About this RNA: An RNA of 177 nucleotides, treated with 2A3 and DMS and read out base by base. For DMS the reverse transcriptase was MarathonRT.
RNA sequence: GGGAACGACUCGAGUAGAGUCGAAAAUCUAAAGAAGACCUACAUACAUUGUAUGUAGACCCUAAGUAUCAAGUCAUUGUCUUAAAAGACAAUGUACUUUCUUCUAUGCUUAGAUUGCACACCGUUGCCUAAGGAGUAUGUUCGCAUACUCCUUAGGAAAAGAAACAACAACAACAAC
Reactivity to 2A3 in 0.01 (KOAc 150mM, MgCl2 10mM, bicine 150mM(pH8.5), 24C), signal-to-noise 4, nucleotides 027 to 126: u000c000u010a030a010a020g030a020a010g020a030c010c010u000a000c000a000u010a010c040a120u120u300g010u010a000u000g010u000a010g020a040c040c000c000u030a100a010g030u040a030u180c080a030a000g030u000c000a000u010u000g000u000c000u070u190a130a090a030a010g010a010c000a010a010u000g000u010a010c000u020u040u000c000u020u000c010u040a040u120g050c020u000u000a020g010a030u040u080g050c080a040c010a030c060c040g170u120u190g070
Reactivity to DMS in 0.01 (KOAc 150mM, MgCl2 10mM, bicine 150mM(pH8.5), 24C), signal-to-noise 5, nucleotides 027 to 126: u000c020u000a020a050a060g000a050a040g010a160c300c000u000a010c010a010u000a000c000a220u010u010g020u000a000u000g010u000a000g000a130c060c080c100u010a070a090g020u000a060u000c110a050a020g010u000c000a010u000u000g010u000c000u000u000a080a080a120a100g000a010c000a010a010u010g000u000a010c000u000u000u000c030u000u000c040u000a110u020g020c220u000u000a010g000a040u010u000g020c170a090c170a180c040c050g000u010u010g010

Source: RMDB library 15KREP, as collected in RNAgym. For 2A3 the reverse transcriptase was SuperScript II with manganese.